RNA sequence: GGGAACGACUCGAGUAGAGUCGAAAAGAUAUGGAGUGCCACCCCAGCGAAGAACUAAAUCGGAAACGAUUUAGGGAGCUGGCGUGGUCACUCCUAAGUCAAAUCGGUCUGCUUCGGCAGACCGAAACUAAUCAGGGAUGUUCGCAUCCCUGAUUAGAAAAGAAACAACAACAACAAC
Reactivity to DMS in 0.01 (KOAc 150mM, MgCl2 10mM, bicine 150mM(pH8.5), 24C), signal-to-noise 3, nucleotides 027 to 126: g010a020u010a300u010g000g010a020g010u000g000c000c000a010c010c250c000c010a010g030c000g000a110a150g000a150a220c000u000a000a000a000u010c000g010g000a160a100a220c000g020a020u010u010u000a010g000g000g000a080g010c020u000g000g010c300g000u000g000g030u020c020a000c000u010c010c020u000a020a100g000u000c070a080a170a110u000c000g010g010u000c000u010g000c000u000u020c240g010g030c000a010g000a000c000c000g000a000a030a150
Reactivity to 2A3 in 0.01 (KOAc 150mM, MgCl2 10mM, bicine 150mM(pH8.5), 24C), signal-to-noise 2, nucleotides 027 to 126: g030a010u100a060u220g010g010a000g020u030g020c000c000a040c010c170c010c000a000g000c000g210a300a070g020a010a010c010u020a010a000a000u010c010g030g040a140a030a020c020g010a000u010u000u000a010g000g010g040a020g000c020u010g030g010c000g020u010g000g020u010c020a000c000u000c010c000u000a040a010g000u000c030a020a060a170u040c010g000g010u020c000u020g020c000u030u130c300g160g000c000a000g000a010c000c000g000a000a000a000

Structure probing data (DMS and 2A3) for a 177-nucleotide construct. The 2A3 profile rests on 3,726 reads. The RNA was probed in 150 mM KOAc, 10 mM MgCl2 and 150 mM bicine (pH 8.5) at 24 C.